[RMDB]
RNA sequence: GGGAACGACUCGAGUAGAGUCGAAAAGGCAAUGAGGAAUGAAUCCAAUGCUGAGCAAAGGCAAUGAUUGACCCCAGAGUGGCCGAGCAAAGCACUAACUUUGUACUUCGGUACAAAGUUAGUGCAAUCUACCAUGUACGUUCGCGUACAUGGUAGAAAAAGAAACAACAACAACAAC
Reactivity to DMS in 0.01 (KOAc 150mM, MgCl2 10mM, bicine 150mM(pH8.5), 24C), signal-to-noise 3, nucleotides 027 to 126: g000g000c020a040a070u000g000a160g020g010a090a070u010g020a080a070u010c040c180a120a060u000g010c000u000g000a200g020c190a070a080a190g000g010c040a040a070u000g000a070u000u010g000a090c060c010c010c040a070g000a140g000u000g000g010c020c000g000a170g020c140a050a100a120g010c000a010c000u010a000a000c010u000u000u000g000u000a000c000u010u010c120g070g000u010a010c000a000a000a000g000u000u000a000g020u000g000c050a010a010
Reactivity to 2A3 in 0.01 (KOAc 150mM, MgCl2 10mM, bicine 150mM(pH8.5), 24C), signal-to-noise 2, nucleotides 027 to 126: g010g000c020a010a100u110g020a070g080g030a110a110u170g050a080a060u070c020c030a040a070u050g010c020u060g040a050g080c080a090a090a040g030g000c030a050a050u120g050a100u080u150g070a110c000c000c000c020a020g030a000g130u080g090g000c000c020g000a010g020c060a090a100a010g000c000a010c000u000a000a000c010u050u000u000g010u010a000c000u000u030c160g110g010u000a000c000a000a000a000g000u000u000a000g000u000g000c000a000a000